[RMDB]
RNA sequence: GGGAACGACUCGAGUAGAGUCGAAAAGAGAGUACGAACGUUCACUCACGUACUCGAACGAACGUACGAUCACACGUGUACACGUGUACGAUCUCACACUCGUGUGUGAGUGAUCACACUCACACGUUCUCACGUGAACGUUCGAUCACGUACGAACCCCCUACCAAGUGUUCGCACUUGGUAGGGGAAAAGAAACAACAACAACAAC
Reactivity to 2A3 in 0.01 (KOAc 150mM, MgCl2 10mM, bicine 150mM(pH8.5), 24C), signal-to-noise 5, nucleotides 027 to 156: g150a000g010a030g000u040a020c030g010a110a000c050g040u050u030c020a050c080u100c030a150c110g070u100a060c030u070c090g000a070a020c070g020a040a000c020g000u040a010c040g010a060u050c030a020c000a000c030g040u060g120u230a070c080a000c140g000u000g010u060a050c050g000a030u060c010u030c030a060c010a020c040u130c050g120u130g000u010g000u000g200a000g010u020g030a040u100c060a030c000a000c260u020c010a020c000a000c010g020u060u030c020u020c020a030c020g020u010g000a070a010c080g020u080u050c030g000a060u070c020a020c110g040u130a050c040g050a060a080c010
Reactivity to DMS in 0.01 (KOAc 150mM, MgCl2 10mM, bicine 150mM(pH8.5), 24C), signal-to-noise 1, nucleotides 027 to 156: g000a240g020a170g000u020a030c000g020a140a280c010g010u000u000c060a060c060u000c000a180c000g000u000a000c000u010c080g020a160a140c060g020a080a200c000g010u000a140c100g000a060u000c030a190c060a000c030g000u030g020u030a090c040a000c000g000u000g030u000a030c100g000a150u000c070u020c050a140c010a110c060u010c280g000u000g000u030g000u030g000a000g060u000g000a190u030c150a040c130a030c070u020c070a000c000a080c010g000u000u000c030u000c000a120c190g020u000g000a030a030c000g040u010u000c000g000a050u010c050a070c050g000u000a170c040g000a040a100c000